[RMDB]
RNA sequence: GGGAACGACUCGAGUAGAGUCGAAAAGACACUGAGAGUGAGUCACUCACACUCUCAGACAGACUCUGACAGACUGUGUGACUCAGUGACUCACAGACAGACUGACUCACACACUGUCUGUGAGUCAGGUGCUGAUCUGGUUCGCCAGAUCAGCACCAAAAGAAACAACAACAACAAC
Reactivity to DMS in 0.01 (KOAc 150mM, MgCl2 10mM, bicine 150mM(pH8.5), 24C), signal-to-noise 2, nucleotides 027 to 126: g010a300c150a130c030u000g000a040g000a060g040u000g010a080g020u000c140a000c070u000c120a080c020a020c000u000c020u010c020a000g000a090c120a170g020a080c050u000c020u000g000a090c080a070g030a110c060u000g020u000g000u030g000a160c060u000c160a110g000u020g000a020c020u000c000a020c040a070g000a010c030a030g000a170c230u000g010a120c120u000c090a030c120a060c180a100c030u010g000u000c020u000g010u000g010a050g000u000c000a000
Reactivity to 2A3 in 0.01 (KOAc 150mM, MgCl2 10mM, bicine 150mM(pH8.5), 24C), signal-to-noise 1, nucleotides 027 to 126: g050a020c020a010c110u020g000a010g000a020g130u010g000a010g050u050c010a020c080u090c000a050c020a000c000u010c000u020c000a000g000a000c010a000g060a000c000u000c040u090g020a020c010a040g040a010c060u000g000u000g010u010g040a000c000u000c120a050g020u000g050a030c010u040c010a030c030a030g000a030c010a020g050a070c060u110g020a040c030u080c150a030c000a010c000a020c140u010g000u060c000u000g000u010g000a010g020u000c000a000